[RMDB]
RNA sequence: GGGAACGACUCGAGUAGAGUCGAAAAGCUCGUCCACUCCGAUCGAGCCACUAGUAGCUAUCGGAACUCUUAGCGGAGUGACCAAAUCUCUCGACUUCAGUUGGACAUCGUGAGAUCGAGGUCCAAAGACCUUUGAUGCCUUCGGGUAUCGAAGGUCAAAAGAAACAACAACAACAAC
Reactivity to 2A3 in 0.01 (KOAc 150mM, MgCl2 10mM, bicine 150mM(pH8.5), 24C), signal-to-noise 9, nucleotides 027 to 126: g010c000u010c020g050u030c030c010a040c020u000c010c000g030a050u060c040g040a010g010c000c010a060c030u070a030g120u050a020g040c020u030a030u090c040g020g020a060a060c010u020c020u070u080a020g040c020g040g020a030g010u060g020a020c010c010a010a040a050u010c010u000c000u010c010g030a040c030u070u040c080a140g040u100u100g060g010a010c010a040u010c010g010u030g040a050g000a020u050c020g030a030g010g010u000c000c000a020a030a020
Reactivity to DMS in 0.01 (KOAc 150mM, MgCl2 10mM, bicine 150mM(pH8.5), 24C), signal-to-noise 9, nucleotides 027 to 126: g000c030u000c060g000u000c050c050a100c070u000c020c020g000a050u020c140g010a030g020c000c050a170c120u030a090g010u010a090g010c060u010a040u010c060g010g010a140a100c040u000c020u010u010a100g020c090g000g010a040g010u010g010a050c030c030a090a090a060u010c020u000c010u010c010g010a060c150u000u010c060a110g010u010u010g020g010a030c190a100u000c000g000u000g000a070g000a040u030c050g000a130g000g010u020c010c080a050a070a080

Structure probing data (2A3 and DMS) for a 177-nucleotide construct.
For DMS the reverse transcriptase was MarathonRT.
DMS (dimethyl sulfate) methylates the pairing face of unpaired adenines and cytosines.
The RNA was probed in 150 mM KOAc, 10 mM MgCl2 and 150 mM bicine (pH 8.5) at 24 C.
Reactivities are given for positions 27 through 126.
2A3 adducts were read by reverse transcription with SuperScript II with manganese.